This 177-nucleotide RNA was probed chemically with DMS and 2A3. For DMS, 4,335 sequencing reads were counted. 2A3 adducts were read by reverse transcription with SuperScript II with manganese. For DMS the reverse transcriptase was MarathonRT. It was measured as part of the RMDB library OK2TRN.
[RMDB]
RNA sequence: GGGAACGACUCGAGUAGAGUCGAAAACGUGCGCUGUUAUGCAUUCGUGGCCAUACCGUUGGCGGUCAUCUGCUACUUCAUCGUCUCCACUCCGAUCGCGGGCGCGCCCACGACGUCGCCCACAGCGGCGGCGUUUAGAAUUCGUUCUAAACGCCGCAAAAGAAACAACAACAACAAC
Reactivity to DMS in 0.01 (KOAc 150mM, MgCl2 10mM, bicine 150mM(pH8.5), 24C), signal-to-noise 4, nucleotides 027 to 126: c080g010u000g000c060g040c060u000g000u000u010a110u000g020c060a100u000u000c060g040u000g000g010c140c060a070u010a070c080c040g020u000u010g020g010c040g010g010u010c060a090u010c060u000g010c030u000a050c050u000u010c090a050u000c040g000u000c030u010c030c030a080c080u010c040c040g010a050u010c060g010c020g010g010g010c020g020c090g020c060c020c050a070c090g000a060c070g010u000c050g020c010c040c040a060c090a080g010c110g000
Reactivity to 2A3 in 0.01 (KOAc 150mM, MgCl2 10mM, bicine 150mM(pH8.5), 24C), signal-to-noise 3, nucleotides 027 to 126: c040g040u050g040c040g000c050u040g050u230u110a070u220g040c060a060u060u100c030g040u030g050g000c030c010a060u100a080c060c040g090u070u110g060g020c080g030g000u050c040a100u010c040u070g020c030u040a070c000u060u080c030a080u030c010g070u010c030u000c020c000a070c020u010c050c030g120a170u100c040g010c020g040g040g000c010g000c020g000c040c010c000a070c010g040a020c000g010u120c050g000c000c030c020a030c030a010g110c060g050